[RMDB]
RNA sequence: GGGAACGACUCGAGUAGAGUCGAAAAACUGCCAUACGUGGCAGAAACACGCCUUACCAGGACUAAACAGCGUGUCUAAAAAACAGUCCUUCAUACCUGAUAUGGAGGGUAGAUCAGGAAUACUAAAAAAAUCGGGUGAAGUUCGCUUCACCCGAAAGAUGUGAUAUACGUUCGCGUAUAUCACAUCAAAAGAAACAACAACAACAAC
Reactivity to 2A3 in 0.01 (KOAc 150mM, MgCl2 10mM, bicine 150mM(pH8.5), 24C), signal-to-noise 5, nucleotides 027 to 156: a000c000u000g000c000c000a020u030a070c190g080u030g000g000c000a000g020a010a020a000c010a000c000g010c000c000u020u070a020c030c050a010g010g000a020c010u080a130a030a020c000a000g000c010g010u000g020u030c130u060a010a030a010a000a010a000c050a000g010u000c020c000u010u060c050a090u060a150c000c010u020g020a030u020a030u130g060g030a080g060g030g020u040a050g030a060u020c010a000g010g040a030a050u160a190c110u210a050a020a040a060a000a030a120u030c000g000g020g000u000g000a010a000g010u030u110c120g040c120u010u000c000a000c000c000c000g000a000a000a000
Reactivity to DMS in 0.01 (KOAc 150mM, MgCl2 10mM, bicine 150mM(pH8.5), 24C), signal-to-noise 2, nucleotides 027 to 156: a080c000u010g020c020c000a070u000a100c190g020u010g000g000c000a010g010a190a130a050c010a010c020g010c000c040u010u000a060c110c070a170g030g020a160c030u020a090a060a060c090a080g000c020g010u000g020u010c100u030a010a040a010a070a000a050c110a130g030u000c040c010u000u000c080a110u000a040c030c060u000g000a190u010a060u000g000g000a120g000g020g040u000a050g000a060u000c020a060g000g000a110a000u000a150c070u000a020a000a050a080a090a110a210u000c010g000g030g050u010g000a020a010g010u000u000c300g020c000u000u000c010a000c000c000c000g010a000a000a040

An RNA of 207 nucleotides, treated with 2A3 and DMS and read out base by base. The RNA was probed in 150 mM KOAc, 10 mM MgCl2 and 150 mM bicine (pH 8.5) at 24 C. Reactivities are given for positions 27 through 156.